The record gives the reactivity of an RNA of 177 nucleotides to 2A3 and DMS. The data come from the RNA Mapping Database (RMDB), library TTRDES. For DMS the reverse transcriptase was MarathonRT. Conditions: 150 mM KOAc, 10 mM MgCl2 and 150 mM bicine (pH 8.5), 24 C. Values cover nucleotides 27 to 126.
[RMDB]
RNA sequence: GGGAACGACUCGAGUAGAGUCGAAAAGAUAUGGAGAACGCGGAGCCGAUAAGAUCCCAUCGGAAACGAUGGAAGAUCUUUUGACGGCUCGCGUUCUCCUAAGUCAAACCCGCUGUUCGCAGCGGGACACAAAAGUGAGGUUCGCCUCACUUUUGUGAAAAGAAACAACAACAACAAC
Reactivity to 2A3 in 0.01 (KOAc 150mM, MgCl2 10mM, bicine 150mM(pH8.5), 24C), signal-to-noise 2, nucleotides 027 to 126: g010a000u020a030u060g020g000a000g000a000a000c010g010c190g260g140a130g030c020c160g250a110u140a300a010g010a000u030c000c000c010a000u030c000g000g010a010a010a000c020g010a000u010g030g070a060a170g000a020u020c010u050u100u050u090g150a120c210g000g020c000u000c000g000c000g020u000u000c000u020c000c000u020a000a000g000u000c000a010a000a060c010c000c030g000c010u050g000u100u120c300g000c160a000g010c000g000g000g080a030
Reactivity to DMS in 0.01 (KOAc 150mM, MgCl2 10mM, bicine 150mM(pH8.5), 24C), signal-to-noise 3, nucleotides 027 to 126: g010a030u000a280u000g000g000a020g000a000a010c010g000c000g050g020a060g030c010c000g040a230u020a020a020g020a010u000c000c000c000a010u000c010g010g010a090a070a100c000g020a030u000g010g010a090a060g000a000u000c000u010u000u010u010g010a110c220g010g010c010u010c000g000c000g000u000u000c010u000c000c000u000a010a050g000u010c020a150a140a190c010c000c000g010c000u010g020u020u010c270g010c020a000g050c000g020g010g010a050